[RMDB]
RNA sequence: GGGAACGACUCGAGUAGAGUCGAAAAGAAAGAUUAAAUUUGCCUGGUCAAAUUGUCAAAAAUACCAUAAAAUAUACUCAACUUUGUCAAUAUCUUAAUAAAACCACUAUUUGUGUGCCUUACAACAUAGUUGCAAGUAAUUCGUUACUUGCAACUAAAAAGAAACAACAACAACAAC
Reactivity to DMS in 0.01 (KOAc 150mM, MgCl2 10mM, bicine 150mM(pH8.5), 24C), signal-to-noise 2, nucleotides 027 to 126: g010a210a090a130g000a050u020u000a020a030a080u000u010u000g040c010c110u010g040g010u010c010a000a010a030u000u000g010u010c010a050a090a110a060a020u000a070c020c010a150u030a070a100a100a100u010a060u000a090c050u000c070a030a110c100u000u000u020g020u000c040a020a050u000a060u020c020u000u000a050a070u010a070a060a090a130c110c020a060c030u000a090u000u010u000g000u000g030u000g000c030c050u000u000a010c080a040a080c110a040
Reactivity to 2A3 in 0.01 (KOAc 150mM, MgCl2 10mM, bicine 150mM(pH8.5), 24C), signal-to-noise 1, nucleotides 027 to 126: g070a000a050a030g030a050u080u160a130a060a140u010u040u030g000c020c080u130g000g030u130c000a020a020a050u050u000g000u020c000a000a000a010a260a000u090a070c000c000a000u230a060a080a030a000u140a030u010a050c000u030c030a080a050c050u100u040u010g050u060c030a120a010u020a070u110c030u150u130a120a080u080a180a080a010a010c000c030a000c030u140a200u070u140u110g020u010g030u040g070c010c000u100u040a000c040a050a000c000a020
This 177-nucleotide RNA was probed chemically with DMS and 2A3. For 2A3, 723 sequencing reads were counted. The RNA was probed in 150 mM KOAc, 10 mM MgCl2 and 150 mM bicine (pH 8.5) at 24 C.